Structure probing data (DMS and 2A3) for a 177-nucleotide construct. The reactions ran in a buffer of 150 mM KOAc, 10 mM MgCl2 and 150 mM bicine (pH 8.5), at 24 C. The 2A3 profile rests on 6,656 reads.
RNA sequence: GGGAACGACUCGAGUAGAGUCGAAAAGGGAGGCAGCUGAAAGGACCCGGCGACACAGGGUCCCCUCCUAUGGCUCCUGGGGGCCUCAUGGGCACCAAAACAGUGGGGCAGGCUGCGUCCCUGGGAGCACUCCCAAUUUAUUCGUAAAUUGGGAGUGAAAAGAAACAACAACAACAAC
Reactivity to DMS in 0.01 (KOAc 150mM, MgCl2 10mM, bicine 150mM(pH8.5), 24C), signal-to-noise 7, nucleotides 027 to 126: g000g010g010a030g000g010c010a020g010c010u010g000a080a110a100g010g010a030c000c000c000g010g030c170g010a140c230a100c130a100g010g010g000u000c000c000c050c030u000c010c030u000a070u010g010g000c010u000c020c010u000g010g000g010g000g010c000c010u000c110a060u010g000g010g010c050a050c080c080a050a070a110a110c150a150g020u000g010g000g010g020c030a120g000g000c010u010g000c030g000u010c000c000c000u000g000g010g000a040g010
Reactivity to 2A3 in 0.01 (KOAc 150mM, MgCl2 10mM, bicine 150mM(pH8.5), 24C), signal-to-noise 2, nucleotides 027 to 126: g000g000g000a020g000g030c010a010g000c010u070g060a100a050a010g030g010a020c010c010c030g030g030c100g120a100c100a000c100a220g000g000g000u000c000c000c000c000u040c010c000u070a140u060g130g000c010u000c020c000u010g000g000g000g030g010c000c000u000c030a080u120g050g060g040c080a070c060c060a060a090a000a090c050a030g060u040g020g000g000g010c010a000g020g000c000u010g000c000g150u030c010c010c000u000g010g010g000a010g000